Chemical mapping of a 207-nucleotide RNA with DMS. For DMS the reverse transcriptase was MarathonRT. Conditions: 150 mM KOAc, 10 mM MgCl2 and 150 mM bicine (pH 8.5), 24 C. DMS (dimethyl sulfate) methylates the pairing face of unpaired adenines and cytosines.
RNA sequence: GGGAACGACUCGAGUAGAGUCGAAAAAGCCCAGCUUGAGAGAUAGGACACGUAAGAGCUAGUGUGUCUUCUUACGUGUGUCUCUCAAGAAAUACAGAGUGAGGGUGGUAAGAAGACACACUAGCUCUUACCACUCCUCUCACUCUGUAUGCGGGCACGAUGCAACAAUGUUCGCAUUGUUGCAUCGAAAAGAAACAACAACAACAAC
Reactivity to DMS in 0.01 (KOAc 150mM, MgCl2 10mM, bicine 150mM(pH8.5), 24C), signal-to-noise 1, nucleotides 027 to 156: a120g000c030c000c000a090g030c000u000u010g000a050g020a100g030a120u000a030g030g040a050c050a200c080g010u010a010a010g030a010g000c030u000a070g000u010g060u000g000u000c020u000u000c010u000u000a000c080g020u010g010u000g000u000c000u000c010u010c020a300a040g000a100a150a070u010a220c170a070g020a220g060u000g010a020g000g020g050u000g020g010u000a010a020g000a080a030g000a090c030a060c060a030c020u010a080g000c030u000c000u000u010a010c010c020a110c120u000c090c020u000c030u000c020a000c000u000c040u000g000u000a000u000g020c060g010g000g070c020a180